Background:
This 177-nucleotide RNA was probed chemically with DMS. For DMS, 1,274 sequencing reads were counted. Source: RMDB library TTRINS, as collected in RNAgym.
RNA sequence: GGGAACGACUCGAGUAGAGUCGAAAAGAUAUGGAUGUGAACGAAGCUCUAGGCGCAUGCGUUUGACGACCGUCGGAAACGACGGUCCGAGCAUGCGCCUAGAGAACUACUUCCCACAUCCUAAGUCGAAGCUAGGAAAGUUCGCUUUCCUAGCUUCAAAAGAAACAACAACAACAAC
Reactivity to DMS in 0.01 (KOAc 150mM, MgCl2 10mM, bicine 150mM(pH8.5), 24C), signal-to-noise 2, nucleotides 027 to 126: g000a120u010a300u000g010g000a000u000g010u000g020a100a170c300g000a040a030g010c060u010c000u000a000g000g000c000g030c010a020u000g000c000g020u000u010u000g030a090c300g010a000c000c020g020u000c000g000g010a090a160a300c000g000a020c040g000g010u000c010c000g010a080g020c000a010u000g000c010g020c000c000u000a010g020a000g000a040a000c040u020a300c020u000u000c000c140c000a020c000a000u000c000c010u000a080a150g010u010c060